[RMDB]
RNA sequence: GGGAACGACUCGAGUAGAGUCGAAAAGAAGAACAGUGCGUCACACUGUUGACGAAAACAAACUGUGUGGAUAGCACACAACUAUCAAACAAAUUGCUGUGAUCGACAGCACGAUCAAAGAAAGAAAGGGAUUCAUAGAGUUCGCUCUAUGAAUCCCAAAAGAAACAACAACAACAAC
Reactivity to 2A3 in 0.01 (KOAc 150mM, MgCl2 10mM, bicine 150mM(pH8.5), 24C), signal-to-noise 2, nucleotides 027 to 126: g180a050a000g030a060a090c190a160g000u000g040c000g000u000c000a000c000a000c000u010g000u000u000g030a000c070g120a030a050a090a030c100a050a030a000c010u000g000u000g000u000g010g050a030u020a080g040c000a000c030a000c000a060a010c060u090a080u200c100a000a110a060c060a090a020a090u210u080g000c010u020g080u090g020a280u200c080g050a010c020a070g090c110a080c030g050a000u070c050a040a040a100g160a120a080a000g100a040a130a060
Reactivity to DMS in 0.01 (KOAc 150mM, MgCl2 10mM, bicine 150mM(pH8.5), 24C), signal-to-noise 1, nucleotides 027 to 126: g060a180a060g000a100a110c160a160g000u000g040c010g010u070c010a020c010a060c000u030g090u000u000g000a010c140g040a170a180a090a090c180a030a030a000c000u000g050u000g000u000g000g000a020u000a010g050c040a070c090a130c190a010a220c040u000a010u010c180a010a160a160c110a010a070a040u000u000g000c000u000g000u000g000a020u000c000g000a230c000a120g000c150a030c000g000a070u020c060a020a110a030g040a060a130a060g000a040a070a070
Source information:
Source: RMDB library OK1LIB, as collected in RNAgym. Chemical mapping of a 177-nucleotide RNA with 2A3 and DMS. Values cover nucleotides 27 to 126. DMS adducts were read by reverse transcription with MarathonRT. For 2A3 the reverse transcriptase was SuperScript II with manganese.